[RMDB]
RNA sequence: GGGAACGACUCGAGUAGAGUCGAAAACAGCAAUCUCGCACUUGCACAAAUCCAUAUUGCACUGCAAUAUGGACUGGGCGGGAAUGCGAGCUGGGUUCGAAAUGUACCGUCGUACCCUUCGCAUACCGUCAAUAUAUGUGUUCGCACAUAUAUUGACAAAAGAAACAACAACAACAAC
Reactivity to 2A3 in 0.01 (KOAc 150mM, MgCl2 10mM, bicine 150mM(pH8.5), 24C), signal-to-noise 9, nucleotides 027 to 126: c020a000g040c050a030a230u060c010u020c050g000c000a050c030u010u060g010c030a010c010a050a070a040u000c000c000a000u000a010u000u020g030c170a170c300u290g000c000a010a000u000a000u010g000g010a000c010u000g000g020g000c020g010g010g030a140a090u040g000c010g000a000g000c040u030g000g020g000u010u020c000g030a010a080a150u200g030u080a040c020c010g010u010c000g010u020a050c010c010c000u060u160c130g020c040a070u070a150c030c070
Reactivity to DMS in 0.01 (KOAc 150mM, MgCl2 10mM, bicine 150mM(pH8.5), 24C), signal-to-noise 7, nucleotides 027 to 126: c040a030g010c170a110a100u010c100u000c010g020c010a060c020u000u010g010c010a050c040a020a140a290u000c000c000a010u000a000u000u000g010c000a220c250u020g000c000a000a000u000a000u000g000g000a010c110u000g000g010g010c000g010g000g010a110a060u000g010c000g000a030g000c070u000g000g010g020u000u000c010g000a000a070a070u000g010u000a030c040c070g010u000c000g010u000a040c000c000c000u000u010c080g000c100a080u000a080c180c110